[RMDB]
RNA sequence: GGGAACGACUCGAGUAGAGUCGAAAAGAGGUGUCAUGGUCAUUGUUGACCGUUCAUAUGAACCCUGCAAUAACAUUGCAACUUGUGUGGGGUUCAUAUAACGGUCAACUGAGACCUUUGACAUCAAAUUCCGUUUCUAAUUCGUUAGAAACGGAAUAAAAGAAACAACAACAACAAC
Reactivity to 2A3 in 0.01 (KOAc 150mM, MgCl2 10mM, bicine 150mM(pH8.5), 24C), signal-to-noise 9, nucleotides 027 to 126: g160a040g000g010u010g000u000c010a010u020g010g000u010c020a100u100u240g000u000u000g000a000c000c000g000u000u010c020a000u000a000u000g000a000a000c000c000c000u010g000c000a040a140u170a170a070c080a140u130u300g060c070a100a110c120u150u130g040u010g010u040g080g000g000g000u000u000c000a000u000a000u000a000a000c000g000g000u000c000a000a000c000u000g010a030g000a000c000c000u030u030u040g000a000c000a000u000c000a000a010
Reactivity to DMS in 0.01 (KOAc 150mM, MgCl2 10mM, bicine 150mM(pH8.5), 24C), signal-to-noise 9, nucleotides 027 to 126: g020a150g010g020u000g010u000c000a020u000g000g010u000c000a100u010u000g010u000u000g000a010c000c000g000u000u000c210a010u010a000u000g000a010a010c000c000c000u000g000c010a050a050u020a060a080c100a300u020u030g010c240a110a120c250u010u000g010u000g020u000g000g000g000g000u000u000c000a000u000a000u000a010a000c000g000g000u000c000a000a000c000u010g000a120g000a010c000c000u000u000u010g000a010c010a010u000c000a050a100

The record gives the reactivity of an RNA of 177 nucleotides to 2A3 and DMS. The RNA was probed in 150 mM KOAc, 10 mM MgCl2 and 150 mM bicine (pH 8.5) at 24 C.